[RMDB]
Notes
This 177-nucleotide RNA was probed chemically with 2A3. The reactions ran in a buffer of 150 mM KOAc, 10 mM MgCl2 and 150 mM bicine (pH 8.5), at 24 C.
RNA sequence: GGGAACGACUCGAGUAGAGUCGAAAACACUGGCAUGCAGCCGUUAUGAUGACGAGUCAGGUCGGGCUCCGCGGUGGGUUUGGUCGCCCAUGGGACGGAGAUAUGGAAAGGGUCUCGUACGCUGUAACGGUGCAACCACGUUCGCGUGGUUGCACCGAAAAGAAACAACAACAACAAC
Reactivity to 2A3 in 0.01 (KOAc 150mM, MgCl2 10mM, bicine 150mM(pH8.5), 24C), signal-to-noise 1, nucleotides 027 to 126: c040a050c070u130g060g000c060a010u050g010c040a000g040c090c000g050u090u050a070u080g230a080u020g000a030c010g010a000g000u010c000a000g200g040u060c030g070g130g090c000u000c010c000g000c000g000g010u010g000g000g070u100u030u060g010g000u190c030g000c000c000c000a030u030g020g010g050a110c070g000g070a000g000a000u130a070u060g060g040a070a000a050g060g010g060u030c000u000c000g000u030a150c030g000c070u020g020u000a020a090

Record summary
Source: RMDB library RFM100, as collected in RNAgym.